[RMDB]
Structure probing data (DMS and 2A3) for a 207-nucleotide construct. For DMS the reverse transcriptase was MarathonRT. For 2A3 the reverse transcriptase was SuperScript II with manganese. The DMS profile rests on 5,124 reads.
RNA sequence: GGGAACGACUCGAGUAGAGUCGAAAAGGUGCAUAACCUUCGGGUUAUGCACCAAAACCUUUGUGGGUGCAGCGAGGAUCACCCUGGACCCAUUGGGUCCAUGGUGGGAGCUGUAAACCCACUCUGGUAAAGUGUGGGAUGAUUCGUCAUCCCACACCAAAGCAUUGAUCUUCGGAUCAAUGCUUUGAAAAGAAACAACAACAACAAC
Reactivity to DMS in 0.01 (KOAc 150mM, MgCl2 10mM, bicine 150mM(pH8.5), 24C), signal-to-noise 2, nucleotides 027 to 156: g010g010u000g000c000a020u000a000a010c000c000u000u010c290g040g020g000u000u000a010u010g000c000a030c000c000a010a020a100a060c010c020u010u000u000g020u010g010g070g040u000g020c020a020g010c010g000a120g000g010a080u010c000a010c010c010c040u000g020g000a040c000c000c010a300u000u020g030g070g010u010c000c000a010u010g020g020u000g000g020g010a180g010c010u000g020u000a010a080a070c000c000c010a000c010u010c040u000g020g040u010a080a080a080g010u010g030u000g010g010g000a040u010g020a080u000u000c300g010u000c020a020u000c000c000c000a000c000a000c030
Reactivity to 2A3 in 0.01 (KOAc 150mM, MgCl2 10mM, bicine 150mM(pH8.5), 24C), signal-to-noise 3, nucleotides 027 to 156: g020g020u010g000c000a000u000a000a000c000c050u010u010c120g020g000g020u000u000a000u000g020c010a000c000c000a000a000a000a000c000c000u030u000u020g000u000g000g000g000u020g000c000a010g000c030g040a270g080g000a010u010c000a010c000c010c010u000g000g000a000c000c010c250a300u180u300g000g000g000u000c000c000a000u000g000g000u010g000g000g000a010g000c000u010g030u110a150a050a000c010c000c000a000c000u000c010u020g000g020u080a190a150a050g000u000g020u000g000g000g000a000u000g000a000u020u130c220g060u020c160a000u030c020c000c000a000c000a010c000